[RMDB]
RNA sequence: GGGAACGACUCGAGUAGAGUCGAAAACGCGCACUACAAUGUUAUUUCUAGGUAUAUUGUAAAGAUAAAGGAUAACUCGGUUGGGAUUGCGUUCUGUAAUGGACGCAUGAACCAGGAAUUCCUAGUAGAUUCAUAUAAUCUUCGGAUUAUAUGAAUCAAAAGAAACAACAACAACAAC
Reactivity to 2A3 in 0.01 (KOAc 150mM, MgCl2 10mM, bicine 150mM(pH8.5), 24C), signal-to-noise 3, nucleotides 027 to 126: c030g030c000g040c030a020c070u050a010c030a010a020u020g050u100u060a080u060u150u080c100u140a070g010g130u050a060u010a010u090u060g020u030a100a130a090g060a070u150a090a220a010g020g010a020u030a060a050c000u030c140g050g070u060u050g180g020g020a030u040u020g000c000g000u010u000c000u010g080u030a080a130u250g000g000a000c000g000c000a000u010g050a010a010c000c000a000g020g020a020a060u060u000c000c010u010a010g020u020a040
Reactivity to DMS in 0.01 (KOAc 150mM, MgCl2 10mM, bicine 150mM(pH8.5), 24C), signal-to-noise 6, nucleotides 027 to 126: c080g020c160g020c120a120c100u000a020c020a020a020u000g010u010u010a070u000u000u010c110u010a080g020g010u000a040u000a030u000u000g000u000a040a130a160g010a120u010a070a100a070g000g010a050u000a060a200c030u000c130g020g010u000u000g020g020g010a090u000u000g010c000g010u000u000c010u000g010u010a090a050u010g010g000a000c000g010c000a010u000g000a090a060c020c010a030g000g000a110a120u000u000c000c000u000a090g020u010a140

Structure probing data (2A3 and DMS) for a 177-nucleotide construct. 2A3 adducts were read by reverse transcription with SuperScript II with manganese. The DMS profile rests on 7,533 reads.